Description:
Conditions: 150 mM KOAc, 10 mM MgCl2 and 150 mM bicine (pH 8.5), 24 C. Structure probing data (2A3) for a 177-nucleotide construct. The 2A3 profile rests on 343 reads.
RNA sequence: GGGAACGACUCGAGUAGAGUCGAAAAACUCUUUGGUGAGUGUGUCAAGGUGUUCAAAGAUUUUAUAGUUCUCAAUUCUACAAAGGCUGGGAAAGAAAAGAUAGAGGUUAAUAGAAAGUUUUUGAACUGUCCUGCUAUACUUCGGUAUAGCAGGACAAAAAGAAACAACAACAACAAC
Reactivity to 2A3 in 0.01 (KOAc 150mM, MgCl2 10mM, bicine 150mM(pH8.5), 24C), signal-to-noise 1, nucleotides 027 to 126: a000c010u020c020u030u030u060g110g060u070g030a130g020u110g000u000g070u100c090a070a120g180g000u110g040u030u020c010a020a020a020g050a000u000u030u020u100a240u070a140g090u230u000c000u020c000a040a180u170u020c060u030a070c020a100a050a000g060g080c050u080g030g000g110a120a000a000g070a000a110a000a000g000a020u040a000g040a000g050g000u170u170a110a050u000a150g110a050a090a000g000u000u000u020u000u020g040a010a000c000

It was measured as part of the RMDB library OK1LIB.